[RMDB]
RNA sequence: GGGAACGACUCGAGUAGAGUCGAAAACCUCUAGUAUUCGUACUAGAGGCACAAGCCGCCCCAACGGCUUCCUGACGGGGCGGAUUCACUUUAAAUGGAGCAAAGCCGCUGUGUUCGCACAGCGGAAGAUUAUAGGCCGAUUCGUCGGCCUAUAAUCAAAAGAAACAACAACAACAAC
Reactivity to 2A3 in 0.01 (KOAc 150mM, MgCl2 10mM, bicine 150mM(pH8.5), 24C), signal-to-noise 3, nucleotides 027 to 126: c010c000u000c000u000a010g010u010a030u050u060c210g020u020a000c000u010a000g010a000g010g010c050a020c010a080a030g040c000c000g000c000c000c030c010a030a010c080g160g000c000u150u040c010c000u020g020a020c050g000g000g010g000c030g030g010a020u110u100c040a050c060u120u170u230a080a150a130u190g010g000a010g000c050a080a030a020g050c020c000g000c010u000g020u000g030u040u080c160g030c120a010c010a000g000c000g000g000a000a000
Reactivity to DMS in 0.01 (KOAc 150mM, MgCl2 10mM, bicine 150mM(pH8.5), 24C), signal-to-noise 2, nucleotides 027 to 126: c010c000u000c000u000a000g020u000a000u000u000c120g000u000a000c000u000a010g010a030g000g030c060a030c150a140a120g010c010c010g010c030c000c020c010a070a300c090g000g010c040u000u020c000c000u000g000a060c300g000g000g000g030c020g000g000a000u010u000c100a150c150u020u000u000a060a080a090u010g000g000a030g000c040a150a190a140g000c000c000g000c000u000g020u000g020u000u000c250g030c020a000c000a000g000c000g010g020a020a000
Source information:
The record gives the reactivity of an RNA of 177 nucleotides to 2A3 and DMS. Values cover nucleotides 27 to 126.